[RMDB]
RNA sequence: GGGAACGACUCGAGUAGAGUCGAAAAAAUAAGAGUUUGGAUUAACCUAUAGGGAAUAAGCGAUCAAGAAUACAACCUAAGGACCUGGUUGACUUAAUUAUUCCAUAGGUUGGUGGAAGCUAGCGAAGUGUAUUAUAUCCUUCGGGAUAUAAUACACAAAAGAAACAACAACAACAAC
Reactivity to DMS in 0.01 (KOAc 150mM, MgCl2 10mM, bicine 150mM(pH8.5), 24C), signal-to-noise 3, nucleotides 027 to 126: a080a060u010a050a090g010a040g040u000u000u000g010g000a060u000u000a040a010c020c000u000a020u010a180g010g000g000a040a020u000a010a010g010c140g000a040u010c060a050a060g000a100a150u010a130c070a050a050c100c050u000a100a090g000g000a120c190c120u000g000g000u000u000g000a120c030u000u000a040a070u000u000a030u000u000c000c000a020u000a010g000g000u000u000g010g020u000g000g020a050a080g000c040u010a060g020c120g030a080a090
Reactivity to 2A3 in 0.01 (KOAc 150mM, MgCl2 10mM, bicine 150mM(pH8.5), 24C), signal-to-noise 2, nucleotides 027 to 126: a020a020u300a070a050g000a020g040u100u070u090g090g010a050u040u040a030a020c000c000u020a030u070a190g110g050g000a020a000u020a040a010g050c080g060a080u070c050a030a000g050a090a010u120a230c060a040a060c000c000u110a160a050g120g000a060c000c070u030g000g000u020u010g030a020c010u030u010a010a040u060u070a050u040u010c010c000a000u010a010g000g000u010u000g000g010u030g060g050a010a020g000c030u050a010g050c010g170a170a060

An RNA of 177 nucleotides, treated with DMS and 2A3 and read out base by base.
For DMS the reverse transcriptase was MarathonRT.